[RMDB]
RNA sequence: GGGAACGACUCGAGUAGAGUCGAAAAUUGCCAUUCAGGCGCUGGAAUGGCGCAUCGCUCCGGCACGUGAUGCCAGCGCACAGGAGAAAAAAGACGCCGACAUGCUGAAUGAAUAUCUGCAUGAUGCACAUCUCUUUACUUUCGAGUAAAGAGAUGUAAAAGAAACAACAACAACAAC
Reactivity to DMS in 0.01 (KOAc 150mM, MgCl2 10mM, bicine 150mM(pH8.5), 24C), signal-to-noise 5, nucleotides 027 to 126: u000u000g020c020c010a110u000u000c050a120g010g020c010g010c010u000g000g010a070a050u010g010g010c020g030c110a030u000c080g010c050u000c090c030g020g010c040a080c120g000u010g000a070u000g010c010c020a050g010c020g020c030a090c090a110g000g020a150g020a010a060a070a080a100a110g010a180c110g030c030c030g010a220c110a020u000g000c020u000g000a050a080u010g010a140a130u010a090u000c020u000g000c020a010u000g010a120u000g000c140
Reactivity to 2A3 in 0.01 (KOAc 150mM, MgCl2 10mM, bicine 150mM(pH8.5), 24C), signal-to-noise 4, nucleotides 027 to 126: u030u050g030c000c010a000u030u040c040a050g090g000c020g000c040u030g010g040a120a140u130g050g000c010g010c040a040u040c030g030c030u060c060c040g070g010c040a020c080g050u060g020a030u050g020c010c000a000g010c010g000c010a060c020a080g100g070a090g050a050a150a040a010a030a030g100a040c060g040c070c020g050a050c020a010u010g000c020u040g060a110a140u180g060a130a070u160a050u150c010u000g020c000a000u020g020a040u140g060c060